[RMDB]
RNA sequence: GGGAACGACUCGAGUAGAGUCGAAAAUGUUACCAUUGGAAAUUUCACGUCAUAGGAAGUUAGCCUUUAUCUACCAACUUUCAAGAACUUGUUUAAUAAAGCGAAAAACUCAACCAAAUGGUACAAAGGACACAUGAGUAUUCGUACUCAUGUGUCCAAAAGAAACAACAACAACAAC
Reactivity to 2A3 in 0.01 (KOAc 150mM, MgCl2 10mM, bicine 150mM(pH8.5), 24C), signal-to-noise 2, nucleotides 027 to 126: u100g010u030u040a020c010c000a000u010u050g040g050a040a060a090u080u090u080c120a070c090g070u060c070a090u140a100g070g010a080a000g040u020u030a020g010c060c000u000u270u070a100u000c040u070a070c020c000a010a040c050u060u150u140c060a090a080g070a130a010c020u050u070g040u040u080u030a040a030u100a070a110a010g030c050g080a100a010a000a020a080c100u120c100a050a070c020c000a040a100a170u000g000g020u000a010c030a000a130a000
Reactivity to DMS in 0.01 (KOAc 150mM, MgCl2 10mM, bicine 150mM(pH8.5), 24C), signal-to-noise 1, nucleotides 027 to 126: u000g010u000u000a020c000c000a020u000u010g000g050a130a030a060u020u000u000c020a050c060g000u000c200a130u000a200g010g000a040a010g010u000u000a110g000c150c030u000u000u000a130u000c080u000a100c080c010a000a020c040u020u010u000c180a160a150g010a060a100c050u000u000g010u000u000u000a010a020u000a080a000a030g010c050g000a020a020a060a070a080c110u000c120a140a110c050c000a030a050a040u000g000g000u000a010c080a120a140a050
About this RNA
Source: RMDB library OK2TRN, as collected in RNAgym. Structure probing data (2A3 and DMS) for a 177-nucleotide construct. For 2A3, 1,248 sequencing reads were counted. The reactions ran in a buffer of 150 mM KOAc, 10 mM MgCl2 and 150 mM bicine (pH 8.5), at 24 C. For 2A3 the reverse transcriptase was SuperScript II with manganese.